[RMDB]
RNA sequence: GGGAACGACUCGAGUAGAGUCGAAAAGACUACCAUGGUUGCAACGGGUAACGGGCAAUCAGGGUUCGAUUCCGGAGAGGGAGCCUGAGAAACGGCUACCACAUCUAAGGAAGCCAGCAGGCUCGGGGUAGUUCUUGAAGUUCGCUUCAAGAACUACAAAAGAAACAACAACAACAAC
Reactivity to 2A3 in 0.01 (KOAc 150mM, MgCl2 10mM, bicine 150mM(pH8.5), 24C), signal-to-noise 1, nucleotides 027 to 126: g020a000c020u010a030c010c000a020u000g000g010u020u010g000c030a300a300c140g020g180g010u130a220a000c010g000g030g000c010a010a030u000c000a010g000g000g020u000u110c000g030a080u050u040c020c010g010g050a130g000a020g050g110g000a000g000c000c000u070g000a080g170a090a120a000c050g000g000c030u020a060c000c000a020c020a080u210c100u120a060a110g020g000a010a000g000c000c020a000g030c000a020g000g000c010u000c000g060g000g020
Reactivity to DMS in 0.01 (KOAc 150mM, MgCl2 10mM, bicine 150mM(pH8.5), 24C), signal-to-noise 2, nucleotides 027 to 126: g020a060c100u000a120c000c000a050u000g000g000u000u000g010c010a060a110c040g010g000g030u000a080a170c020g000g030g000c000a020a000u000c020a010g000g010g000u000u000c050g010a210u010u000c020c000g010g020a120g020a160g030g000g030a010g000c000c000u020g000a080g000a070a080a130c170g040g010c000u010a080c000c000a070c150a120u000c200u010a110a140g000g000a080a020g010c010c010a100g010c010a040g010g010c010u000c000g000g010g000